Source: RMDB library OK2TRN, as collected in RNAgym. The record gives the reactivity of an RNA of 177 nucleotides to DMS.
RNA sequence: GGGAACGACUCGAGUAGAGUCGAAAAGCGCAAUGGGGGAAACCCUGACGCAGCAACGCCGCGUGGAGGAUGACACUUUUCGGAGCGUAAACUCCUUUUCUUAGGGAAGAAUUCUGACGGUACCUAAAUUAUUCAGGGGGUUCGCCCCCUGAAUAAUAAAAGAAACAACAACAACAAC
Reactivity to DMS in 0.01 (KOAc 150mM, MgCl2 10mM, bicine 150mM(pH8.5), 24C), signal-to-noise 2, nucleotides 027 to 126: g010c070g000c020a060a150u020g060g000g020g010g010a120a090a060c000c000c010u020g020a060c140g010c040a060g060c080a060a110c180g010c060c040g010c070g020u000g000g020a050g000g010a060u010g020a120c230a020c020u000u000u000u000c190g020g000a040g000c030g020u010a050a210a250c040u000c000c000u030u000u000u000c040u050u000a110g010g010g000a040a080g010a130a100u000u010c100u000g020a080c060g040g010u020a060c030c020u010a050a050